[RMDB]
RNA sequence: GGGAACGACUCGAGUAGAGUCGAAAAUGCAACCUCCGCCUCUGGGGUUCAAGUGAUUCUUCUGCCUCAGCAGGCACUGCCUGCCCGAGUAGCUGGGACUGCAGGCGUGUGCCACCAAGUACAGCUACGAUAGGUAGCGUUUCGACGCUACCUAUCGAAAAGAAACAACAACAACAAC
Reactivity to DMS in 0.01 (KOAc 150mM, MgCl2 10mM, bicine 150mM(pH8.5), 24C), signal-to-noise 3, nucleotides 027 to 126: u010g020c070a080a090c060c030u000c060c080g000c020c000u000c020u000g010g000g000g010u000u000c130a030a050g000u010g010a140u000u000c020u000u000c060u000g000c010c010u000c030a060g010c120a070g020g010c000a060c080u000g020c040c040u000g000c010c050c060g010a110g000u000a010g000c010u000g000g010g020a080c060u010g000c130a050g000g000c020g010u000g010u010g020c010c030a150c220c080a070a070g010u000a070c040a050g010c010u000a050
Reactivity to 2A3 in 0.01 (KOAc 150mM, MgCl2 10mM, bicine 150mM(pH8.5), 24C), signal-to-noise 2, nucleotides 027 to 126: u080g000c000a000a070c000c000u070c040c050g020c020c000u030c010u020g030g000g030g020u040u110c070a040a010g060u060g170a260u190u050c000u020u030c010u050g000c000c000u020c000a020g040c070a030g020g000c020a000c020u020g010c010c000u020g000c010c000c010g050a100g010u030a030g010c030u040g000g030g060a020c060u080g000c010a030g010g000c030g090u200g010u050g000c020c010a040c060c050a100a010g060u070a070c010a030g010c020u040a010

About this RNA: The data come from the RNA Mapping Database (RMDB), library OK2TRN. This 177-nucleotide RNA was probed chemically with DMS and 2A3. The RNA was probed in 150 mM KOAc, 10 mM MgCl2 and 150 mM bicine (pH 8.5) at 24 C. DMS adducts were read by reverse transcription with MarathonRT.